Structure probing data (2A3 and DMS) for a 177-nucleotide construct. For 2A3, 4,029 sequencing reads were counted. The reactions ran in a buffer of 150 mM KOAc, 10 mM MgCl2 and 150 mM bicine (pH 8.5), at 24 C.
[RMDB]
RNA sequence: GGGAACGACUCGAGUAGAGUCGAAAAUGAAGGCCCUUCUCCCCGAACGACACGUCUCGAUCACCAUAGAGGUUGUGGACGCAUCCAGAAGAAAGAUCACCGUGCAGGAAGAAGGGCGAUGAACAUCCUUACAGCUGUUUUUCGAAACAGCUGUAAGAAAAGAAACAACAACAACAAC
Reactivity to 2A3 in 0.01 (KOAc 150mM, MgCl2 10mM, bicine 150mM(pH8.5), 24C), signal-to-noise 3, nucleotides 027 to 126: u100g040a080a060g170g010c030c010c000u010u010c030u020c020c020c010c020g030a060a030c040g100a050c020a000c010g020u020c030u070c130g020a020u040c010a020c090c020a060u070a090g120a050g120g010u060u050g030u100g040g120a030c080g000c030a050u000c020c010a030g030a150a010g040a050a190a030g030a040u020c020a000c060c000g010u030g000c000a010g010g010a030a020g000a000a020g010g000g000c010g000a010u020g010a020a020c020a060u050c020
Reactivity to DMS in 0.01 (KOAc 150mM, MgCl2 10mM, bicine 150mM(pH8.5), 24C), signal-to-noise 4, nucleotides 027 to 126: u010g020a170a140g010g000c000c000c010u000u010c010u000c020c000c010c060g000a060a030c060g010a190c110a180c020g000u000c030u000c070g000a050u000c020a090c140c170a120u020a140g020a130g010g020u000u010g030u000g000g020a060c100g020c070a080u000c060c050a110g020a110a090g000a080a090a100g000a050u000c030a130c080c010g000u000g000c020a060g000g000a040a020g000a030a010g010g010g020c010g000a020u000g000a090a120c170a100u010c060